An RNA of 177 nucleotides, treated with 2A3 and DMS and read out base by base. It was measured as part of the RMDB library M2PK90. 2A3 adducts were read by reverse transcription with SuperScript II with manganese.
RNA sequence: GGGAACGACUCGAGUAGAGUCGAAAAAUAAAUAUCAGUUAUAUGACUGACGGAACGUGGAAUUAACCACAUGAAGUAUAACGAUGACAAUGCGGACCGUCUGGGCGUUGCAUCCGCUCCAAAAAAACAAUGUCAGUAUCUUCGGAUACUGACAUUGAAAAGAAACAACAACAACAAC
Reactivity to 2A3 in 0.01 (KOAc 150mM, MgCl2 10mM, bicine 150mM(pH8.5), 24C), signal-to-noise 2, nucleotides 027 to 126: a000u110a000a080a010u240a030u060c020a040g000u020u030a110u000a040u250g080a080c040u000g030a020c040g060g030a090a020c050g020u030g060g040a110a180u240u060a160a180c000c000a010c010a020u070g060a030a000g040u050a040u010a080a020c040g000a020u030g040a020c040a020a140u130g010c020g020g000a050c000c000g020u020c040u060g110g120g010c020g010u050u120g000c020a020u020c020c030g050c010u000c020c020a070a080a030a010a010a020a030
Reactivity to DMS in 0.01 (KOAc 150mM, MgCl2 10mM, bicine 150mM(pH8.5), 24C), signal-to-noise 3, nucleotides 027 to 126: a040u010a040a120a140u010a090u020c010a090g010u000u000a050u000a050u000g010a140c060u000g010a030c060g000g010a130a090c180g000u010g000g000a120a100u000u010a120a160c020c000a010c020a100u000g010a070a220g020u000a030u000a020a060c020g010a040u000g000a060c110a040a040u000g010c040g000g010a060c030c020g000u010c050u000g010g000g030c020g010u000u000g000c070a110u000c060c030g010c050u000c020c040a020a010a010a040a070a060a120